[RMDB]
RNA sequence: GGGAACGACUCGAGUAGAGUCGAAAACAAACAAAGCCAGCGAUGGCCUAGCUCGAAAAUAAGCCAACAUGGCAGGCCAAAUCGAGCUCGUGCAAGGAGGGCACGAAUUAACGCUGGCACAAACAAACGCAUUCAUGUGCUUCGGCACAUGAAUGCGAAAAGAAACAACAACAACAAC
Reactivity to 2A3 in 0.01 (KOAc 150mM, MgCl2 10mM, bicine 150mM(pH8.5), 24C), signal-to-noise 3, nucleotides 027 to 126: c010a000a000a050c030a080a120a000g020c030c000a000g000c000g090a090u230g020g040c010c000u000a010g000c000u000c000g000a030a060a070a100u270a170a000g000c000c030a070a070c100a300u190g040g000c040a020g000g000c000c050a060a000a010u060c020g010a000g000c000u000c000g010u020g000c050a120a040g150g030a040g030g270g000c000a000c030g000a010a070u160u040a220a000c000g010c000u000g000g020c000a000c000a000a020a000c000a000a040a000